An RNA of 177 nucleotides, treated with DMS and read out base by base. Source: RMDB library TTRDES, as collected in RNAgym. Conditions: 150 mM KOAc, 10 mM MgCl2 and 150 mM bicine (pH 8.5), 24 C. For DMS the reverse transcriptase was MarathonRT. Reactivities are given for positions 27 through 126.

RNA sequence: GGGAACGACUCGAGUAGAGUCGAAAAGAUAUGGAUGCGUGAUGGCUAGCCUAUGGGUCGGAAACGACCCAUUAGGCUUGGACCCAUACGCAUCCUAAGUCAAAAGCCAACGGUUCGCCGUUGGCAAGAGAAUGUCGCAGUUCGCUGCGACAUUCUCAAAAGAAACAACAACAACAAC
Reactivity to DMS in 0.01 (KOAc 150mM, MgCl2 10mM, bicine 150mM(pH8.5), 24C), signal-to-noise 1, nucleotides 027 to 126: g000a060u020a300u010g000g010a010u000g010c000g020u000g010a070u000g010g050c080u000a060g020c020c000u000a020u000g010g020g030u000c000g020g000a040a100a190c000g020a010c000c000c000a000u000u010a000g020g000c020u000u000g020g000a160c300c020c010a000u000a000c040g000c010a020u000c000c000u000a010a070g000u020c080a100a080a170a150g010c000c010a000a000c000g020g010u010u020c300g020c000c000g000u010u000g010g040c010a000a020